[RMDB]
The data come from the RNA Mapping Database (RMDB), library RFM100. The record gives the reactivity of an RNA of 177 nucleotides to 2A3. 2A3 adducts were read by reverse transcription with SuperScript II with manganese. The reactions ran in a buffer of 150 mM KOAc, 10 mM MgCl2 and 150 mM bicine (pH 8.5), at 24 C. Values cover nucleotides 27 to 126.
RNA sequence: GGGAACGACUCGAGUAGAGUCGAAAAUCCUGAAUGAUUUUUCCUGUAGAAAGGGGCUUAGGAUAAUGAUUUCAGCUUUAUUGAGGGCAGAUUAGUAGCAGUCUCGAUGCUGCCUCUCAAUACGCGCACAGACCAGUGCGUUCGCGCACUGGUCUGUAAAAGAAACAACAACAACAAC
Reactivity to 2A3 in 0.01 (KOAc 150mM, MgCl2 10mM, bicine 150mM(pH8.5), 24C), signal-to-noise 2, nucleotides 027 to 126: u010c000c010u000g020a020a030u010g020a010u000u000u000u030u000c020c000u090g060u150a070g100a200a190a070g030g010g010g030c000u060u040a000g000g000a020u030a020a010u010g000a010u000u000u030c050a050g000c000u220u210u030a000u000u030g000a000g000g000g040c040a010g030a050u050u100a060g110u100a020g020c050a040g100u040c040u020c020g040a060u300g030c000u000g000c000c000u080c020u000c000a000a000u000a000c070g020c020g000c020